[RMDB]
The record gives the reactivity of an RNA of 177 nucleotides to 2A3 and DMS. Reactivities are given for positions 27 through 126. Source: RMDB library OK1LIB, as collected in RNAgym. 2A3 adducts were read by reverse transcription with SuperScript II with manganese.
RNA sequence: GGGAACGACUCGAGUAGAGUCGAAAAGAAUAUAAGAGCGCAGUAACUGUGAGAGCAAACUGCGCCCGGACUGUAGGAUCCGGUGGCACAGCAACGCUCACUCACAAAACGCUGUGCCACGUGAAGAGCAUACCUCACGUUUCGACGUGAGGUAUGCAAAAGAAACAACAACAACAAC
Reactivity to 2A3 in 0.01 (KOAc 150mM, MgCl2 10mM, bicine 150mM(pH8.5), 24C), signal-to-noise 4, nucleotides 027 to 126: g030a070a030u230a010u050a130a000g030a020g000c010g000c010a000g010u090a080a090c050u060g000u020g010a050g000a000g060c070a080a120a000c010u020g000c000g000c000c000c000g010g000a000c020u100g050u210a100g070g090a070u000c000c000g030g000u030g000g000c000a000c000a000g010c010a030a120c060g030c000u040c010a060c020u050c000a090c040a030a130a050a020c120g000c000u000g000u000g000c000c000a000c030g090u110g060a100a060g060a020
Reactivity to DMS in 0.01 (KOAc 150mM, MgCl2 10mM, bicine 150mM(pH8.5), 24C), signal-to-noise 2, nucleotides 027 to 126: g000a090a170u020a190u020a120a020g000a060g010c000g110c010a000g000u000a130a140c120u050g000u000g000a090g000a140g010c150a030a070a030c010u000g000c010g000c000c000c010g000g020a020c050u000g040u000a080g000g080a290u010c030c030g010g030u000g000g000c000a000c020a000g000c000a190a080c140g000c110u000c100a050c090u000c220a160c210a100a050a080a080c220g000c000u000g040u000g000c000c000a020c070g000u020g040a080a220g010a130